RNA sequence: GGGAACGACUCGAGUAGAGUCGAAAAGCUGCCUCUGACGUCCUUAAGGGUGGUAAAGCGGGUCUCCCCCGGAAACUGGGGCGCGCCUGGCGCUAGCACGGGUAUGCGUGGCGGUCGACCCUGGCCGGCGUAUAUCCCAUUUCGAUGGGAUAUACGCAAAAGAAACAACAACAACAAC
Reactivity to DMS in 0.01 (KOAc 150mM, MgCl2 10mM, bicine 150mM(pH8.5), 24C), signal-to-noise 3, nucleotides 027 to 126: g000c030u000g020c010c000u000c040u010g010a140c080g010u000c020c070u000u000a190a130g000g010g040u000g000g000u000a030a070a130g010c050g000g000g010u010c070u000c030c010c000c020c030g010g010a040a090a110c090u010g010g010g000g000c050g010c090g000c040c010u000g010g020c020g000c050u010a110g000c060a060c100g010g040g000u000a060u000g010c020g030u000g000g020c020g000g000u000c020g000a130c050c000c010u000g000g020c030c050g000
Reactivity to 2A3 in 0.01 (KOAc 150mM, MgCl2 10mM, bicine 150mM(pH8.5), 24C), signal-to-noise 2, nucleotides 027 to 126: g020c010u030g010c010c000u040c030u040g050a060c020g050u030c000c000u050u160a050a140g060g010g030u060g030g010u120a110a060a010g050c030g000g000g070u020c050u050c030c040c000c000c020g040g000a150a070a030c060u040g000g010g020g010c020g000c020g000c020c020u030g120g000c000g000c030u030a030g010c060a020c130g070g000g070u110a020u140g010c040g010u020g020g050c010g010g010u050c010g050a190c010c000c000u000g060g000c070c000g060